[RMDB]
RNA sequence: GGGAACGACUCGAGUAGAGUCGAAAAUUGUUGAACGUUUAAAAUUUGUAGCAGAUGCACAACAAAUUGAAUGUGAAGAUGAAGCCUUGGCAUUUAUCGCUAAAGCGUCUGAAGGGGGUAUGCGUGAUGAUUGCAAAGCUUUCGAGCUUUGCAAUCAAAAAGAAACAACAACAACAAC
Reactivity to DMS in 0.01 (KOAc 150mM, MgCl2 10mM, bicine 150mM(pH8.5), 24C), signal-to-noise 1, nucleotides 027 to 126: u010u000g030u010u000g000a040a040c170g020u060u000u000a020a010a020a010u000u000u000g000u000a200g000c060a110g000a050u000g010c050a050c090a100a020c030a030a000a040u020u010g010a140a060u000g010u030g040a160a080g000a030u010g000a090a110g000c050c000u000u010g000g000c060a020u000u000u020a050u010c090g000c010u000a070a040a110g030c000g000u000c060u020g010a140a060g000g000g000g010g000u010a060u000g000c050g040u010g010a140
Background
This 177-nucleotide RNA was probed chemically with DMS. Source: RMDB library OK1LIB, as collected in RNAgym. Conditions: 150 mM KOAc, 10 mM MgCl2 and 150 mM bicine (pH 8.5), 24 C. Values are in units of 0.01, from 0 to 300, in steps of 10. The DMS profile rests on 1,662 reads. DMS adducts were read by reverse transcription with MarathonRT.